[RMDB]
RNA sequence: GGGAACGACUCGAGUAGAGUCGAAAACGGAUACCUGAGGGUGGGAGGGAGGAGCGCCCCGACAUGCUCGUCGGUCACGAGCAGCACGUCCCUGUCUUCGAAACCAGAGAAGACCUCAUCGAGCGAAGCACAUGAGAAGGUUCGCCUUCUCAUGUGCAAAAGAAACAACAACAACAAC
Reactivity to DMS in 0.01 (KOAc 150mM, MgCl2 10mM, bicine 150mM(pH8.5), 24C), signal-to-noise 2, nucleotides 027 to 126: c190g040g010a110u010a100c020c050u020g000a260g000g010g000u040g010g000g020a180g020g000g010a140g050g000a080g050c060g000c040c030c020c050g030a060c130a030u000g000c010u000c020g030u020c090g020g000u010c160a170c010g000a010g020c060a020g020c100a060c090g010u010c050c010c040u000g010u000c010u000u000c030g020a060a090a210c160c130a120g000a210g010a040a050g000a040c030c090u000c080a030u030c050g020a030g030c070g010a110a100
Reactivity to 2A3 in 0.01 (KOAc 150mM, MgCl2 10mM, bicine 150mM(pH8.5), 24C), signal-to-noise 2, nucleotides 027 to 126: c040g040g000a050u120a140c030c040u020g090a130g080g100g000u300g080g050g110a240g070g060g030a150g000g030a100g040c040g060c000c000c000c000g000a040c030a030u070g000c020u000c050g050u060c050g000g040u070c030a010c040g010a010g000c000a000g020c020a020c050g050u050c000c000c030u050g050u030c000u010u030c000g070a240a100a140c040c030a020g000a010g010a120a030g010a020c010c010u050c050a110u100c040g030a000g040c010g060a090a040

An RNA of 177 nucleotides, treated with DMS and 2A3 and read out base by base. For DMS the reverse transcriptase was MarathonRT. The reactions ran in a buffer of 150 mM KOAc, 10 mM MgCl2 and 150 mM bicine (pH 8.5), at 24 C.